[RMDB]
RNA sequence: GGGAACGACUCGAGUAGAGUCGAAAAAGCAGUUAUAUCGAAAAACGAUAUAACUGCAACUAGGAUGGGGUGUGAUAGGUGGCACGGAGAAUUUUGGAUUCUCAGGGAUGGGUUCGAUUCUCAUAGUCCUAAAAGCAGUGUGUCAAAACGCACUGCACCAGCAUAAAUUAUUCGUAAUUUAUGCUGGAAAAGAAACAACAACAACAAC
Reactivity to DMS in 0.01 (KOAc 150mM, MgCl2 10mM, bicine 150mM(pH8.5), 24C), signal-to-noise 2, nucleotides 027 to 156: a120g020c010a000g020u020u000a000u000a010u000c000g000a100a050a100a160a300c000g020a020u000a020u010a010a020c010u010g000c000a000a020c040u000a070g020g010a120u000g000g000g020g000u000g020u000g000a170u010a080g020g030u010g020g020c040a050c080g020g010a060g020a010a050u000u000u030u010g030g000a070u000u000c010u000c020a090g000g020g020a070u000g000g010g020u010u000c050g000a270u000u000c030u000c040a110u000a130g010u000c040c040u000a050a040a140a130g050c000a010g010u010g000u000g000u000c060a060a070a080a240c230g000c000a010c000u000g000c000a060
Reactivity to 2A3 in 0.01 (KOAc 150mM, MgCl2 10mM, bicine 150mM(pH8.5), 24C), signal-to-noise 5, nucleotides 027 to 156: a000g000c000a000g000u000u000a000u000a000u000c020g080a160a080a060a090a070c020g000a000u000a000u000a000a000c000u000g000c000a000a010c020u040a020g040g050a070u060g000g020g020g020u050g020u020g040a100u080a110g040g040u050g060g010c050a020c040g030g020a020g030a050a030u060u130u190u260g120g040a020u070u000c030u010c050a040g040g030g050a060u100g010g010g020u040u070c030g030a050u100u000c020u010c030a040u050a050g060u020c020c040u090a050a060a030a010g000c000a000g000u000g000u000g030u070c080a050a020a040a080c020g000c000a000c000u000g000c000a000
Background
This 207-nucleotide RNA was probed chemically with DMS and 2A3. The data come from the RNA Mapping Database (RMDB), library OK3TST. The reactions ran in a buffer of 150 mM KOAc, 10 mM MgCl2 and 150 mM bicine (pH 8.5), at 24 C. The DMS profile rests on 4,586 reads. 2A3 is a SHAPE reagent: it acylates the 2'-hydroxyl of flexible nucleotides of all four kinds. For 2A3 the reverse transcriptase was SuperScript II with manganese.